[RMDB]
RNA sequence: GGGAACGACUCGAGUAGAGUCGAAAAGAUAUGGAGGAUGGGAGGAUUCUGGUCGGAAACGACCACUAUCCGAGGAUCAUCCCUCCUAAGUCAAACCUUCUCGAUUUGUUCGCAAAUCGAGAAGGAACCUGUCUAUUUGGUUCGCCAAAUAGACAGGAAAAGAAACAACAACAACAAC
Reactivity to DMS in 0.01 (KOAc 150mM, MgCl2 10mM, bicine 150mM(pH8.5), 24C), signal-to-noise 3, nucleotides 027 to 126: g000a040u010a300u010g000g010a030g010g000a030u000g000g000g010a040g000g000a010u000u000c070u010g020g020u010c000g000g000a080a090a170c000g000a020c000c000a000c040u000a000u000c000c000g000a060g030g010a050u010c000a010u000c100c020c010u010c000c000u010a030a110g000u000c040a080a080a170c000c000u000u000c000u000c000g000a010u000u000u000g020u000u010c210g020c010a000a000a010u000c000g000a010g000a010a000g000g000a030a030
Reactivity to 2A3 in 0.01 (KOAc 150mM, MgCl2 10mM, bicine 150mM(pH8.5), 24C), signal-to-noise 1, nucleotides 027 to 126: g020a020u090a030u140g000g010a010g010g010a010u010g010g010g010a020g000g000a010u020u020c010u010g010g000u000c010g000g000a070a050a050c010g000a010c010c000a000c000u010a010u000c020c000g060a070g000g000a020u010c010a010u060c100c020c020u000c010c000u050a210a020g060u040c050a050a050a250c000c000u000u000c010u000c000g010a000u000u000u030g070u080u150c300g000c160a000a000a000u010c000g000a000g000a000a000g000g000a000a000
The record gives the reactivity of an RNA of 177 nucleotides to DMS and 2A3. The reactions ran in a buffer of 150 mM KOAc, 10 mM MgCl2 and 150 mM bicine (pH 8.5), at 24 C. For DMS the reverse transcriptase was MarathonRT.